[RMDB]
RNA sequence: GGGAACGACUCGAGUAGAGUCGAAAAACUAUUUGUUCUAUAGCAAAUAAACCCGAAACACAGUAUAUAUUUGUUAUAUAUGCUUUGUGGUACACAGCUGUUAGGACUUGAGCCAUCAGGGUCCAAAGCUAAUAUCGCAUUUCGAUGCGAUAUUAGCAAAAGAAACAACAACAACAAC
Reactivity to 2A3 in 0.01 (KOAc 150mM, MgCl2 10mM, bicine 150mM(pH8.5), 24C), signal-to-noise 3, nucleotides 027 to 126: a000c050u020a030u030u010u000g050u070u030c100u070a090u300a090g000c000a000a010a040u030a020a100a040c000c000c010g040a010a110a010c020a000c000a010g040u010a000u000a000u000a020u030u090u150g140u300u020a000u020a000u000a010u010g000c000u050u030u030g010u010g040g040u060a010c080a000c010a050g090c020u030g020u120u080a050g010g000a010c010u020u070g010a000g030c050c000a080u100c070a050g020g020g080u010c010c000a030a000a010
Reactivity to DMS in 0.01 (KOAc 150mM, MgCl2 10mM, bicine 150mM(pH8.5), 24C), signal-to-noise 2, nucleotides 027 to 126: a090c170u000a000u000u000u000g010u010u000c210u000a150u040a050g000c010a000a000a010u000a060a080a130c010c010c010g000a200a050a030c020a030c050a020g000u000a000u000a050u010a000u000u040u060g000u040u040a050u000a010u000a010u010g010c000u000u040u020g070u000g000g000u000a110c190a080c220a020g000c050u030g000u050u010a160g000g010a070c050u000u030g000a160g010c120c120a020u000c040a070g000g020g000u070c000c010a120a070a090